[RMDB]
RNA sequence: GGGAACGACUCGAGUAGAGUCGAAAAUACUGGGCCCCUCACACCAAAACAAGACAGUGUAUGAACAUUCAUGUGCAUGGAUGCACACACACAAAUGCUAGGUAAAAUGAAACUAAGGCAGAAAGGGGAUAUGGACCAACUCCAAGGAGUUGGAACAUGAUACCCCGAGGUUCGCCUCGGGGUAUCAAAAAGAAACAACAACAACAAC
Reactivity to 2A3 in 0.01 (KOAc 150mM, MgCl2 10mM, bicine 150mM(pH8.5), 24C), signal-to-noise 1, nucleotides 027 to 156: u130a000c030u080g030g110g110c010c020c000c000u070c000a080c000a030c000c020a020a040a090a030c070a040a090g160a130c040a030g000u010g010u020a040u080g050a050a000c010a040u060u030c000a010u080g060u120g290c080a000u050g070g060a020u030g020c020a000c000a000c020a000c000a000c020a120a140a010u060g010c000u000a010g050g020u100a120a150a140a160u120g050a000a040a000c050u100a050a000g090g000c080a090g010a060a090a020g000g000g000g000a000u050a020u050g000g000a010c000c000a000a000c000u000c010c010a060a120g090g000a000g000u010u020g000g000a010a010c020a020
Reactivity to DMS in 0.01 (KOAc 150mM, MgCl2 10mM, bicine 150mM(pH8.5), 24C), signal-to-noise 1, nucleotides 027 to 156: u000a030c040u000g000g000g000c000c020c000c010u070c090a140c080a080c000c010a110a240a080a110c010a090a050g010a300c160a130g000u000g010u000a040u000g040a150a090c000a020u000u000c000a030u010g000u000g020c170a130u000g080g010a010u010g000c100a150c000a040c030a030c000a060c060a060a170a180u000g000c040u000a290g040g000u000a060a060a150a120u010g010a100a030a100c220u000a060a060g000g060c050a050g000a030a010a010g010g090g000g040a160u000a040u000g000g000a250c000c000a010a000c000u000c000c010a060a140g100g000a040g000u000u000g000g020a020a150c030a120
An RNA of 207 nucleotides, treated with 2A3 and DMS and read out base by base. 2A3 is a SHAPE reagent: it acylates the 2'-hydroxyl of flexible nucleotides of all four kinds.